[RMDB]
Chemical mapping of a 207-nucleotide RNA with 2A3. Reactivities are given for positions 27 through 156. It was measured as part of the RMDB library OK3TST.

RNA sequence: GGGAACGACUCGAGUAGAGUCGAAAAGACCUCUCUCAUUCCUCCAAGACAAGCAAGCAAUGUCUUCCAUAACAGUAACAAGACUUUUUUCACUGGGUAGCCUUUCGGAAUCUUGUCUCGUAGGGUGGACACCAUUUGGAAGAGAGCGAGGGGGAGGGUCAUAGUCCCGAUUCGUCGGGACUAUGACAAAAGAAACAACAACAACAAC
Reactivity to 2A3 in 0.01 (KOAc 150mM, MgCl2 10mM, bicine 150mM(pH8.5), 24C), signal-to-noise 2, nucleotides 027 to 156: g030a020c000c000u010c000u020c000u000c000a130u120u070c000c000u010c010c010a060a040g020a090c030a050a030g140c030a080a000g050c010a060a080u060g000u010c000u020u000c010c000a030u120a130a080c030a090g010u110a070a000c040a140a160g070a150c100u140u110u070u000u060u130c060a030c030u010g020g000g040u080a050g070c010c020u080u120u070c030g010g010a010a030u050c010u040u090g020u050c050u040c120g060u020a010g000g060g010u040g050g000a030c010a020c050c000a060u130u000u080g050g010a030a000g080a000g000a000g020c130g020a050g000g010g010g000g000a030g010g040